[RMDB]
RNA sequence: GGGAACGACUCGAGUAGAGUCGAAAACAGCGCAGUCGGCGUGGAAGCGAAGUGCCGCCAGAACUGCGGAAGCGCAAGGGGCGGAACGGACCGAGGUUUGAAAGAAAAUCUCACGGAAUUGGCAACCCACUACCGUCAGUUUCGACUGACGGUAGUGAAAAGAAACAACAACAACAAC
Reactivity to DMS in 0.01 (KOAc 150mM, MgCl2 10mM, bicine 150mM(pH8.5), 24C), signal-to-noise 3, nucleotides 027 to 126: c100a110g040c060g000c020a030g000u020c070g030g000c070g010u000g010g010a110a120g000c020g000a220a100g000u030g050c020c000g000c030c030a050g010a100a090c070u010g020c000g010g020a160a050g020c000g020c040a090a020g030g000g000g000c020g010g010a080a070c070g000g000a190c170c090g000a010g010g030u010u000u030g010a120a190a080g000a140a040a050a000u000c000u000c000a170c100g000g000a050a080u030u020g010g010c070a050a130c030c070
Reactivity to 2A3 in 0.01 (KOAc 150mM, MgCl2 10mM, bicine 150mM(pH8.5), 24C), signal-to-noise 4, nucleotides 027 to 126: c090a010g050c030g000c020a030g030u050c030g060g010c020g030u070g090g060a090a020g050c030g090a120a010g070u050g110c000c010g010c000c000a060g010a140a090c000u000g010c000g000g020a070a040g080c010g000c020a020a100g040g000g000g000c000g000g010a060a020c040g040g030a040c040c090g010a030g020g010u060u000u030g100a110a080a030g060a010a180a000a010u000c010u000c000a010c050g030g030a050a090u080u070g040g000c000a010a060c000c000
Chemical mapping of a 177-nucleotide RNA with DMS and 2A3. The 2A3 profile rests on 4,085 reads. For DMS, 3,715 sequencing reads were counted. The reactions ran in a buffer of 150 mM KOAc, 10 mM MgCl2 and 150 mM bicine (pH 8.5), at 24 C.